[RMDB]
RNA sequence: GGGAACGACUCGAGUAGAGUCGAAAAGCUGCAUGGCCCGGCGGGCACCGCUGCCAUCUUCCGGCCCGGCGGUCAUGUGGUAGGCGUCGGCGCUGGUGCCGUAGCCCACCAGCUCGGCGAUGGGCCACCACUAUCCUAGUUUCGACUAGGAUAGUGGAAAAGAAACAACAACAACAAC
Reactivity to DMS in 0.01 (KOAc 150mM, MgCl2 10mM, bicine 150mM(pH8.5), 24C), signal-to-noise 5, nucleotides 027 to 126: g010c050u000g010c080a110u000g010g010c040c040c030g000g000c010g010g000g010c030a050c060c040g000c050u000g010c040c040a080u010c100u010u010c100c060g020g000c030c200c040g000g000c020g000g010u000c030a040u010g020u000g010g030u000a040g010g010c010g020u000c010g010g000c120g020c120u000g000g020u010g010c030c030g010u000a190g030c040c100c010a020c010c000a020g010c010u000c020g010g010c030g000a080u000g010g010g010c020c030a210
Reactivity to 2A3 in 0.01 (KOAc 150mM, MgCl2 10mM, bicine 150mM(pH8.5), 24C), signal-to-noise 6, nucleotides 027 to 126: g060c030u090g040c040a080u050g010g000c020c040c040g040g100c000g010g020g010c050a040c050c020g020c060u070g030c030c010a090u050c080u230u050c070c050g000g000c020c040c000g040g050c010g000g000u030c030a130u150g010u030g020g000u020a050g030g070c000g010u010c000g010g020c070g010c180u180g050g110u230g000c030c030g030u020a040g010c000c000c000a000c000c000a000g000c000u010c010g070g030c060g060a080u130g020g030g000c000c000a010

Source: RMDB library OK2TST, as collected in RNAgym. This 177-nucleotide RNA was probed chemically with DMS and 2A3. Reactivities are given for positions 27 through 126. The DMS profile rests on 9,925 reads.